[RMDB]
RNA sequence: GGGAACGACUCGAGUAGAGUCGAAAAUUUGGCCACCCAACCCCGGAUCGCUGGACACGAAAUAGUUUGUGAGCACUCCGGGUAGCACAUAUAUCACUCUUCACGAUAUUAAUCGGAUCUUGGCGGCGAAUUCUGAUAUCUUCGGAUAUCAGAAUUCAAAAGAAACAACAACAACAAC
Reactivity to DMS in 0.01 (KOAc 150mM, MgCl2 10mM, bicine 150mM(pH8.5), 24C), signal-to-noise 3, nucleotides 027 to 126: u000u010u000g010g010c050c040a140c040c020c060a150a140c240c000c000c010g010g000a040u000c160g010c010u010g010g040a300c010a030c050g030a070a110a160u010a100g020u010u010u000g010u010g030a050g020c020a130c110u000c000c010g000g000g010u000a040g000c100a030c070a050u010a100u010a030u000c030a100c060u010c060u010u010c080a120c090g010a060u000a050u000u010a040a080u000c030g000g000a080u000c050u000u000g000g010c060g010g030c120
Reactivity to 2A3 in 0.01 (KOAc 150mM, MgCl2 10mM, bicine 150mM(pH8.5), 24C), signal-to-noise 3, nucleotides 027 to 126: u070u030u130g100g010c030c020a030c030c010c010a050a040c040c020c010c010g000g030a020u020c100g040c060u050g090g200a020c000a010c030g100a090a190a010u180a120g220u040u110u090g040u010g010a010g010c010a010c050u000c000c010g000g010g010u010a010g020c020a010c030a040u180a010u020a010u070c020a050c070u100c090u160u160c040a020c150g010a010u010a030u080u180a130a070u090c030g000g030a030u010c020u080u060g050g050c040g000g030c070